RNA sequence: GGGAACGACUCGAGUAGAGUCGAAAAGGGGAAAAGUAAACGAUGACCCAUCACCAAGUCUACGUUAGAAUGAUAUAUUAAUAUGUAAAAUAUGAUUGUGAACUCUGGGUAGUCCUAUGGUUUGCACAUAACUCAACCAAUUCGUUGGUUGAGUUAUAAAAGAAACAACAACAACAAC
Reactivity to 2A3 in 0.01 (KOAc 150mM, MgCl2 10mM, bicine 150mM(pH8.5), 24C), signal-to-noise 6, nucleotides 027 to 126: g040g000g000g040a030a030a010a080g090u190a110a070a030c060g030a060u050g080a030c010c000c000a050u060c010a000c020c010a050a010g030u000c020u050a040c010g050u080u080a060g050a170a060u070g030a030u040a010u030a020u240u230a180a100u110a070u160g040u090a100a120a060a050u090a060u040g040a060u070u130g030u030g040a040a020c010u020c040u080g050g000g030u070a070g060u070c000c010u040a050u040g060g030u020u030u110g000c040a050c010
Reactivity to DMS in 0.01 (KOAc 150mM, MgCl2 10mM, bicine 150mM(pH8.5), 24C), signal-to-noise 5, nucleotides 027 to 126: g010g000g000g000a070a090a070a090g020u000a030a060a060c090g000a100u010g000a240c010c010c020a100u020c070a210c040c010a050a100g020u000c010u010a040c030g000u020u010a050g010a090a090u010g000a180u010a050u020a060u020u030a070a090u020a080u000g000u020a050a070a120a040u000a060u010g000a030u000u020g030u000g010a070a050c050u000c130u000g000g000g000u000a090g000u010c020c050u010a080u010g010g010u000u000u010g000c090a080c220